Source information:
This 207-nucleotide RNA was probed chemically with DMS and 2A3. Conditions: 150 mM KOAc, 10 mM MgCl2 and 150 mM bicine (pH 8.5), 24 C. DMS (dimethyl sulfate) methylates the pairing face of unpaired adenines and cytosines. For DMS, 2,107 sequencing reads were counted. The data come from the RNA Mapping Database (RMDB), library OK3TST. The 2A3 profile rests on 1,092 reads. DMS adducts were read by reverse transcription with MarathonRT.
[RMDB]
RNA sequence: GGGAACGACUCGAGUAGAGUCGAAAAUAUAGUGGACCACAUCAUGACAUUUUGGGCAACAGUGGACCACAUAUACAACGGUGGUCUCAUAAGAUAAUAAUGGAGCUGAAGAAUUUCUAUCACUUAAUGAUGUCAUAGCUGUUGCAACAUCAUAGCAACCGACGAUCAUAUUCGUAUGAUCGUCGGUAAAAGAAACAACAACAACAAC
Reactivity to DMS in 0.01 (KOAc 150mM, MgCl2 10mM, bicine 150mM(pH8.5), 24C), signal-to-noise 2, nucleotides 027 to 156: u010a140u000a160g020u000g000g000a250c010c030a040c020a170u000c080a100u030g030a060c030a070u000u000u000u000g010g020g100c010a080a040c020a090g030u010g010g000a110c000c000a040c030a060u000a110u000a110c170a100a100c180g000g080u000g020g010u000c050u020c060a090u010a120a130g020a140u010a100a030u000a020a090u000g020g020a120g020c090u000g020a080a140g010a120a090u000u010u000c110u010a130u000c010a070c030u010u000a090a090u000g000a090u020g000u000c050a050u020a130g000c020u010g000u000u010g010c030a050a080c060a060u010c020a040u010a110g000c030a110
Reactivity to 2A3 in 0.01 (KOAc 150mM, MgCl2 10mM, bicine 150mM(pH8.5), 24C), signal-to-noise 3, nucleotides 027 to 156: u200a000u070a010g120u060g000g020a050c040c000a040c030a030u080c000a020u080g050a030c020a050u160u100u060u110g050g020g000c030a060a030c020a090g000u020g050g010a040c020c050a010c000a000u170a000u040a010c100a110a010c120g060g000u020g020g010u000c020u000c050a050u090a090a060g060a080u020a180a000u080a060a040u130g080g010a050g000c060u080g070a060a040g030a120a100u100u160u060c060u040a090u140c050a020c110u040u040a050a020u090g030a010u030g020u050c020a050u070a040g010c030u030g030u080u050g010c010a010a020c040a030u070c020a010u040a040g080c070a030